An RNA of 207 nucleotides, treated with DMS and 2A3 and read out base by base. The reactions ran in a buffer of 150 mM KOAc, 10 mM MgCl2 and 150 mM bicine (pH 8.5), at 24 C. Values are in units of 0.01, from 0 to 300, in steps of 10. For DMS the reverse transcriptase was MarathonRT.
RNA sequence: GGGAACGACUCGAGUAGAGUCGAAAAGUGUGAAGUGAGUCUCCCACUUACGAGCACGAAUUACAUGGGAGUGUUAACAUUACUGGGCGCCAGGAGCCCUACCUGGACAAGUAGCGAAGUACAGCCCGCGUAUGAGCUACGACUAAUUACGGGCACACCUAGUAGGACGUUUCGACGUCCUACUAGGAAAAGAAACAACAACAACAAC
Reactivity to DMS in 0.01 (KOAc 150mM, MgCl2 10mM, bicine 150mM(pH8.5), 24C), signal-to-noise 2, nucleotides 027 to 156: g030u020g010u010g000a220a200g010u000g000a120g030u000c030u020c030c020c020a300c050u000u000a020c030g030a300g010c010a140c020g030a160a130u000u020a170c040a160u040g030g000g000a110g030u000g000u010u000a040a090c090a160u010u010a060c020u000g020g010g060c050g000c060c010a060g000g000a180g000c050c030c030u010a030c030c000u000g000g010a070c090a050a160g000u000a030g010c000g030a130a200g040u000a020c010a140g000c010c000c040g040c210g050u000a020u010g000a300g000c010u000a010c020g010a090c140u010a060a060u000u000a030c110g000g050g020c000a080c080a130
Reactivity to 2A3 in 0.01 (KOAc 150mM, MgCl2 10mM, bicine 150mM(pH8.5), 24C), signal-to-noise 3, nucleotides 027 to 156: g020u010g000u020g080a070a060g020u000g010a020g020u060c040u020c030c020c000a010c040u000u000a010c020g020a030g040c000a000c020g110a140a180u160u100a130c130a150u060g000g000g040a030g020u030g080u120u140a090a030c030a090u060u150a110c080u130g060g070g000c080g000c030c000a000g000g000a030g000c000c000c010u010a010c000c000u010g060g000a070c030a100a050g010u000a000g010c010g030a080a020g000u010a000c000a020g060c000c000c010g040c040g020u010a020u220g000a000g000c000u010a010c030g040a010c020u060a040a120u150u080a080c110g000g000g000c010a000c000a000